[RMDB]
RNA sequence: GGGAACGACUCGAGUAGAGUCGAAAAAACGCGAAUACUACAGCGUAAGACAUGGAGACACAUUUAAUGGCUGAGAAACGAACAGGACUUGCGGAGGAUGGCGCAAAGUCUGUCUAUGAGCGUUUAAAGAACGACCGUGCUCCCUAUGAGACACGCGAAUGGAACCGACGUUCGCGUCGGUUCCAUUAAAAGAAACAACAACAACAAC
Reactivity to 2A3 in 0.01 (KOAc 150mM, MgCl2 10mM, bicine 150mM(pH8.5), 24C), signal-to-noise 1, nucleotides 027 to 156: a000a000c080g000c000g000a060a090u100a210c080u020a040c050a100g010c000g070u030a000a190g070a050c040a020u110g120g000a020g060a000c080a000c010a010u140u100u120a150a110u070g020g030c000u060g000a000g070a130a100a000c040g000a000a050c000a050g050g050a030c000u030u060g000c000g000g000a060g010g000a000u070g190g020c050g050c030a020a020a020g000u000c000u020g050u000c080u200a130u210g000a010g000c010g040u000u060u110a080a080a060g150a050a020c080g020a030c000c000g020u100g030c000u070c030c000c010u090a150u280g040a000g020a040c010a000c030g010c080g090
Background: Conditions: 150 mM KOAc, 10 mM MgCl2 and 150 mM bicine (pH 8.5), 24 C. Chemical mapping of a 207-nucleotide RNA with 2A3. It was measured as part of the RMDB library OK3TST. For 2A3, 343 sequencing reads were counted. Reactivities are rounded to 0.1 and cut off at 0 and 3.